[RMDB]
RNA sequence: GGGAACGACUCGAGUAGAGUCGAAAACGCGGGGAGGUGGAGAUGCCAUGCCGACCCGAAGAGGAAAGAAGGACUCGGACGCGAACCCGUGAGUGGAAACCUCGUUCUUUAUUGGGGAGUACACUCGGAUAUCAUCCUACUUCGGUAGGAUGAUAUCAAAAGAAACAACAACAACAAC
Reactivity to DMS in 0.01 (KOAc 150mM, MgCl2 10mM, bicine 150mM(pH8.5), 24C), signal-to-noise 2, nucleotides 027 to 126: c070g030c040g060g000g000g000a170g010g000u000g010g010a210g020a070u000g000c070c050a110u020g010c010c010g000a190c020c000c010g030a090a100g000a140g010g020a050a060a040g030a140a080g000g000a040c030u010c100g020g010a100c070g000c050g010a050a200c020c020c030g010u000g010a010g000u000g000g000a170a120a140c000c030u010c140g000u000u000c300u000u010u010a140u030u020g000g000g000g000a070g010u000a070c010a000c030u010c010g000
Reactivity to 2A3 in 0.01 (KOAc 150mM, MgCl2 10mM, bicine 150mM(pH8.5), 24C), signal-to-noise 2, nucleotides 027 to 126: c030g000c000g000g020g010g020a040g000g000u040g030g020a110g020a060u120g140c060c020a090u120g030c000c000g020a030c000c010c020g000a030a040g030a030g030g080a060a040a080g060a030a070g040g020a020c030u030c050g000g020a010c030g010c000g090a050a080c020c020c000g040u080g010a010g000u010g000g010a020a020a010c000c000u060c040g090u160u020c100u150u280u100a170u090u140g010g000g000g000a010g010u000a000c010a000c000u000c000g000
Description:
Conditions: 150 mM KOAc, 10 mM MgCl2 and 150 mM bicine (pH 8.5), 24 C. Chemical mapping of a 177-nucleotide RNA with DMS and 2A3. Source: RMDB library 15KREP, as collected in RNAgym. For 2A3, 2,295 sequencing reads were counted. For DMS the reverse transcriptase was MarathonRT.